[RMDB]
RNA sequence: GGGAACGACUCGAGUAGAGUCGAAAAAUCAUCUGAAGAUCAGCUAUUAGAAGAGAAAGAUCAGUUAAGUCCUUUGGACCUGAUCAGCUGGAUACAAGAACUACUGAUUUCAACUUCUUUGGCUUAAAAAAGGCCACAGAGUUCGCUCUGUGGCCAACACUUCUUUUAAGUUCGCUUAAAAGAAGUGAAAAGAAACAACAACAACAAC
Reactivity to 2A3 in 0.01 (KOAc 150mM, MgCl2 10mM, bicine 150mM(pH8.5), 24C), signal-to-noise 3, nucleotides 027 to 156: a000u060c010a020u020c050u180g070a100a030g050a150u110c060a030g010c010u040a070u180u050a220g010a030a010g010a010g040a070a080a010g030a010u020c010a000g010u080u160a120a010g000u030c010c010u060u060u110g010g030a030c000c020u050g050a190u100c060a020g120c070u040g000g000a050u080a230c010a040a000g020a040a010c010u070a030c010u070g020a030u010u050u070c050a090a070c010u010u020c010u020u020u020g000g000c000u010u020a000a070a020a030a040a040g010g000c000c000a000c000a000g000a010g030u040u090c090g050c080u000c000u010g010u000g000g000c000c000a010a010
Reactivity to DMS in 0.01 (KOAc 150mM, MgCl2 10mM, bicine 150mM(pH8.5), 24C), signal-to-noise 2, nucleotides 027 to 156: a120u010c050a100u000c010u000g030a120a160g020a130u010c100a090g000c030u000a070u010u010a020g040a070a000g010a060g020a150a120a050g030a010u000c010a010g020u000u010a080a050g030u000c020c030u010u020u010g050g010a090c030c020u020g010a160u010c150a140g050c050u000g020g040a070u000a090c040a040a040g020a020a040c020u000a120c020u000g020a030u000u000u010c020a090a260c020u010u000c010u020u000u010g000g010c000u000u040a010a010a080a100a040a180g020g000c010c010a020c000a080g000a060g030u000u020c300g010c010u010c010u020g000u000g000g040c000c010a000a000

An RNA of 207 nucleotides, treated with 2A3 and DMS and read out base by base.
The RNA was probed in 150 mM KOAc, 10 mM MgCl2 and 150 mM bicine (pH 8.5) at 24 C.
Values cover nucleotides 27 to 156.
Reactivities are rounded to 0.1 and cut off at 0 and 3.